The data come from the RNA Mapping Database (RMDB), library RSTRND. This 207-nucleotide RNA was probed chemically with 2A3. The 2A3 profile rests on 1,063 reads. The reactions ran in a buffer of 150 mM KOAc, 10 mM MgCl2 and 150 mM bicine (pH 8.5), at 24 C.
RNA sequence: GGGAACGACUCGAGUAGAGUCGAAAAACGGUCGUAGGUUCAGGAGAAGCGGGUCGAGGAUGCGCAGUCAUCUCGUCAACGCUCUGCGCGAACCAAUAGGUGCCGAUAACACUCGCACCGACUUCGCCCUCGCCGCCUGAGCGAGCCUCGAAGUCCGGGGUACCUUGAACUUCGGUUCAAGGUACCCAAAAGAAACAACAACAACAAC
Reactivity to 2A3 in 0.01 (KOAc 150mM, MgCl2 10mM, bicine 150mM(pH8.5), 24C), signal-to-noise 2, nucleotides 027 to 156: a000c030g000g040u050c040g030u110a080g040g000u030u050c000a010g060g030a070g020a160a070g010c010g000g000g030u040c000g020a090g130g060a060u100g000c220g050c090a050g010u290c000a020u010c030u010c020g030u000c040a210a080c020g000c030u000c020u060g110c070g010c140g020a000a020c000c050a010a060u140a080g070g010u120g020c060c050g030a050u130a110a030c100a020c020u030c070g000c000a010c050c060g000a000c000u010u020c000g030c010c030c000u000c000g000c010c000g170c020c080u120g020a090g000c000g000a000g000c020c000u010c010g000a030a010g000u050c070c090g040

2A3 adducts were read by reverse transcription with SuperScript II with manganese.